The data come from the RNA Mapping Database (RMDB), library OK3TST. Chemical mapping of a 207-nucleotide RNA with 2A3 and DMS. 2A3 adducts were read by reverse transcription with SuperScript II with manganese. The reactions ran in a buffer of 150 mM KOAc, 10 mM MgCl2 and 150 mM bicine (pH 8.5), at 24 C. The 2A3 profile rests on 1,885 reads.
RNA sequence: GGGAACGACUCGAGUAGAGUCGAAAAGUGUAUCACCAUUACUGUAAUCUUGAUUAAACCCACAAUUUAAAACUGCUGCCGUUAUUUAGAAAGCACAACUUUAGCAGAAUAUUUGUAUGUGAUUUUAUGGGUAACAAAGCAAAUUCACGUUAAAGUAGCUAUAUAAAUGCUUCGGCAUUUAUAUAGCAAAAGAAACAACAACAACAAC
Reactivity to 2A3 in 0.01 (KOAc 150mM, MgCl2 10mM, bicine 150mM(pH8.5), 24C), signal-to-noise 3, nucleotides 027 to 156: g030u040g040u080a040u090c020a030c060c000a040u060u140a070c080u040g060u170a060a080u100c050u080u070g060a120u120u120a150a120a130c010c050c010a040c050a120a110u110u250u290a130a160a040a060c020u030g030c020u010g040c050c020g020u030u010a070u030u120u020a060g040a100a040a020g020c020a000c010a040a060c010u010u070u070a020g000c030a010g100a240a040u020a060u050u090u020g040u020a180u060g030u000g050a050u000u060u040u070a070u060g040g000g000u010a000a010c010a040a070a020g020c000a000a000a190u130u130c100a040c110g030u070u080a070a020a060g050u120a030
Reactivity to DMS in 0.01 (KOAc 150mM, MgCl2 10mM, bicine 150mM(pH8.5), 24C), signal-to-noise 2, nucleotides 027 to 156: g020u000g010u010a090u010c040a080c060c040a030u000u030a190c140u020g000u020a080a100u010c030u000u000g030a110u000u000a060a050a170c010c010c080a040c130a080a150u030u000u000a030a070a170a130c100u000g080c010u000g010c060c060g060u000u000a080u010u000u000a100g010a100a130a110g000c110a090c050a040a060c010u000u000u000a040g030c020a140g020a160a100u000a030u000u000u000g000u010a110u000g010u000g010a020u000u000u000u000a070u010g030g030g000u010a040a060c060a020a090a210g020c010a010a030a080u000u000c060a070c120g010u000u000a070a020a060g000u000a120